An RNA of 177 nucleotides, treated with DMS and 2A3 and read out base by base.
For 2A3 the reverse transcriptase was SuperScript II with manganese.
The reactions ran in a buffer of 150 mM KOAc, 10 mM MgCl2 and 150 mM bicine (pH 8.5), at 24 C.
For DMS, 1,674 sequencing reads were counted.
RNA sequence: GGGAACGACUCGAGUAGAGUCGAAAAAUAUGCACGAUUACCGGCGCUCGGUGUCGGUCUGGUUCCGCUCGAUCUGGAUGCUAGCGCCGCGUGGCGAUCUGAUGGCCCAGGCGACGCUGUACUACCACAGGGUCAUGAAAUUCGUUUCAUGACCCUGAAAAGAAACAACAACAACAAC
Reactivity to DMS in 0.01 (KOAc 150mM, MgCl2 10mM, bicine 150mM(pH8.5), 24C), signal-to-noise 2, nucleotides 027 to 126: a070u000a030u000g000c070a040c050g000a070u000u000a060c160c020g000g020c130g000c080u010c080g050g010u000g000u000c000g000g000u000c050u000g020g000u020u000c080c160g020c060u010c150g000a060u010c050u020g000g000a090u000g010c020u010a040g020c030g030c040c020g000c090g020u000g010g020c050g000a060u020c100u010g010a120u010g000g020c120c010c020a070g000g000c010g000a040c050g010c010u010g020u000a080c090u000a160c050c060a190
Reactivity to 2A3 in 0.01 (KOAc 150mM, MgCl2 10mM, bicine 150mM(pH8.5), 24C), signal-to-noise 1, nucleotides 027 to 126: a000u180a010u100g060c060a030c030g020a060u000u240a040c030c020g030g000c130g000c020u180c150g040g000u080g000u070c000g030g080u000c060u050g020g030u170u000c000c120g000c060u040c010g100a190u020c010u140g080g000a100u110g020c080u090a020g060c000g010c050c010g040c100g030u040g030g000c080g010a100u040c130u250g160a220u180g140g040c010c010c000a010g000g090c000g010a010c030g000c020u000g000u080a030c050u060a030c010c010a030